[RMDB]
RNA sequence: GGGAACGACUCGAGUAGAGUCGAAAAUGGCGCUGACCUCUCCAGGCGACCAAAAACCAGCACGGUACACACCGCCGCAACGCCGGCUAACUACACCAGAGCCGGCAACGUCAGCAGAGCGAUGUUAGGAAAAUAUCCAGUUCGCUGGAUAUUUUCCAAAAGAAACAACAACAACAAC
Reactivity to DMS in 0.01 (KOAc 150mM, MgCl2 10mM, bicine 150mM(pH8.5), 24C), signal-to-noise 2, nucleotides 027 to 126: u010g000g040c090g000c030u000g000a140c050c020u000c070u010c020c080a160g010g000c040g040a050c020c060a010a080a100a140a160c000c020a080g020c150a120c110g020g010u050a060c110a090c160a080c000c040g000c030c010g000c070a140a030c230g030c000c010g010g000c010u010a050a080c030u010a100c140a100c230c160a170g010a090g000c000c000g020g110c030a000a000c070g000u000c090a060g090c040a130g000a110g010c050g010a030u010g000u020u030a060